[RMDB]
RNA sequence: GGGAACGACUCGAGUAGAGUCGAAAAUUGGAAAAGACCCACGCAUCUGGUCACAGAAUUGUUCUCGGUUAUGAGAGUAUAGUAGAAGAAAACUGGUUUUCUCUGAGUUGGUGUCAAAAGUGCUGUGUGAGAGUGUAGAGAAACGGAGUGUGGGCCAGCACAUUUGUAGGUUCGCCUACAAAUGUGCAAAAGAAACAACAACAACAAC
Reactivity to 2A3 in 0.01 (KOAc 150mM, MgCl2 10mM, bicine 150mM(pH8.5), 24C), signal-to-noise 1, nucleotides 027 to 156: u020u040g060g000a060a000a080a000g130a090c000c020c010a010c020g000c000a160u000c030u140g050g080u120c020a020c020a110g160a130a150u140u090g050u110u000c050u030c010g040g020u150u100a080u120g020a010g020a020g020u030a010u070a160g020u090a010g030a120a000g100a020a230a030a000c140u020g190g000u070u020u100u070c120u000c030u020g000a010g030u090u000g040g040u070g060u110c000a120a060a000a060g030u020g070c070u020g020u020g010u050g040a020g000a010g020u080g000u080a050g000a010g000a070a110a030c010g010g000a000g000u030g000u010g000g000g040c020c000a000
An RNA of 207 nucleotides, treated with 2A3 and read out base by base. The reactions ran in a buffer of 150 mM KOAc, 10 mM MgCl2 and 150 mM bicine (pH 8.5), at 24 C. As a SHAPE reagent, 2A3 marks flexible, mostly unpaired nucleotides at the ribose 2'-OH.